An RNA of 177 nucleotides, treated with 2A3 and DMS and read out base by base. DMS adducts were read by reverse transcription with MarathonRT. Source: RMDB library M2PK50, as collected in RNAgym. The reactions ran in a buffer of 150 mM KOAc, 10 mM MgCl2 and 150 mM bicine (pH 8.5), at 24 C.
RNA sequence: GGGAACGACUCGAGUAGAGUCGAAAAGCGCCCCUUUUCGAAGGGGCGCACUGGAAAUAAAGCCGAAAGGCUAGGCAUUCCUUAUUAGGCGAAAGCCUGCCACUAUUGAGAUCUUCGGAUCUCAAAAUCCCUAGUGAUAAUUCGUUAUCACUAGGGAAAAAGAAACAACAACAACAAC
Reactivity to 2A3 in 0.01 (KOAc 150mM, MgCl2 10mM, bicine 150mM(pH8.5), 24C), signal-to-noise 4, nucleotides 027 to 126: g000c010g000c000c010c010c000u030u040u050u070c190g100a020a000g010g000g000g000c000g020c000a000c000u000g020g080a010a060a070u140a090a130a000g000c010c010g030a070a040a010g010g000c010u010a010g000g050c030a050u020u050c000c000u030u160a230u090u200a060g020g000c020g030a050a010a000g000c010c000u000g010c010c010a060c050u070a180u100u080g000a000g000a010u000c000u040u070c290g100g000a000u000c000u000c010a000a000a010a030
Reactivity to DMS in 0.01 (KOAc 150mM, MgCl2 10mM, bicine 150mM(pH8.5), 24C), signal-to-noise 5, nucleotides 027 to 126: g000c010g020c000c000c000c000u000u000u000u020c160g010a010a020g020g010g000g010c000g010c000a000c040u000g010g010a050a050a070u000a070a100a070g010c000c000g000a140a100a130g010g010c000u000a030g010g010c150a190u000u000c010c010u000u000a130u000u010a050g010g010c010g000a100a060a180g000c010c000u000g010c080c050a090c190u010a160u000u000g000a010g000a010u000c000u000u000c210g020g000a010u000c000u000c000a010a010a080a140
Values cover nucleotides 27 to 126.
For 2A3, 6,634 sequencing reads were counted.